[RMDB]
RNA sequence: GGGAACGACUCGAGUAGAGUCGAAAAAAGGUGCCAUCAUAUCGGUUAAGAACUCUUAACUCUGAUGGCUUUCGAGUUAUGUGCUGCAUUGAAGCUCUCCCUUCAAAUGGUCGUACAGUUCCGUGAAAUUCGGCAGUACAUUCGUGUACUGCCGAAUAAAAGAAACAACAACAACAAC
Reactivity to DMS in 0.01 (KOAc 150mM, MgCl2 10mM, bicine 150mM(pH8.5), 24C), signal-to-noise 2, nucleotides 027 to 126: a020a100g000g000u000g010c000c000a020u000c010a080u010a100u020c270g020g000u000u000a010a020g010a230a170c300u010c000u010u000a000a010c010u020c140u000g020a010u000g000g000c000u000u000u000c020g000a070g000u000u010a050u000g000u010g000c020u000g010c050a050u030u000g000a030a070g010c070u000c090u010c080c130c000u000u000c040a040a040a050u010g010g030u000c120g010u000a000c070a120g010u010u000c020c020g000u000g000a100a050
Structure probing data (DMS) for a 177-nucleotide construct. Values are in units of 0.01, from 0 to 300, in steps of 10. The reactions ran in a buffer of 150 mM KOAc, 10 mM MgCl2 and 150 mM bicine (pH 8.5), at 24 C. Reactivities are given for positions 27 through 126. The data come from the RNA Mapping Database (RMDB), library M2PK90.